[RMDB]
RNA sequence: GGGAACGACUCGAGUAGAGUCGAAAAUAGAAGUCGCGAUAAAUGGGCGCCGGCGGAGCGGAGGGAGUUCCGAGCGGCGGCGGCAAGCUGGCUGCGAGCGGCUGAGCAGCACUCCAAGCUCGAACAAGUUAACAAAAACGUUCGCGUUUUUGUUAACAAAAGAAACAACAACAACAAC
Reactivity to 2A3 in 0.01 (KOAc 150mM, MgCl2 10mM, bicine 150mM(pH8.5), 24C), signal-to-noise 1, nucleotides 027 to 126: u110a000g080a130a000g030u040c020g000c010g080a050u100a200a300a090u120g040g030g010c040g000c000c000g040g040c020g010g000a020g020c040g020g100a070g030g060g020a070g020u060u000c000c010g000a140g050c000g020g010c000g000g010c010g010g000c000a000a020g050c010u060g060g000c000u030g020c030g050a030g030c020g000g020c040u050g020a030g000c000a000g030c000a010c030u000c010c040a040a040g010c000u030c030g010a060a020c050a180a080
Reactivity to DMS in 0.01 (KOAc 150mM, MgCl2 10mM, bicine 150mM(pH8.5), 24C), signal-to-noise 1, nucleotides 027 to 126: u010a080g040a110a050g020u010c000g030c020g000a130u000a040a100a080u000g000g000g000c030g000c030c040g020g020c050g000g010a050g030c020g000g000a060g000g000g000a170g010u000u000c030c020g010a070g010c000g040g010c080g040g000c020g010g000c010a040a090g010c010u000g010g030c050u000g010c030g010a080g000c050g000g000c020u000g010a120g010c000a090g010c040a120c040u020c020c060a060a130g020c030u000c010g020a080a120c170a030a120
Chemical mapping of a 177-nucleotide RNA with 2A3 and DMS. The DMS profile rests on 950 reads. DMS adducts were read by reverse transcription with MarathonRT. Reactivities are given for positions 27 through 126. Conditions: 150 mM KOAc, 10 mM MgCl2 and 150 mM bicine (pH 8.5), 24 C. The data come from the RNA Mapping Database (RMDB), library M2PK90. The 2A3 profile rests on 1,337 reads.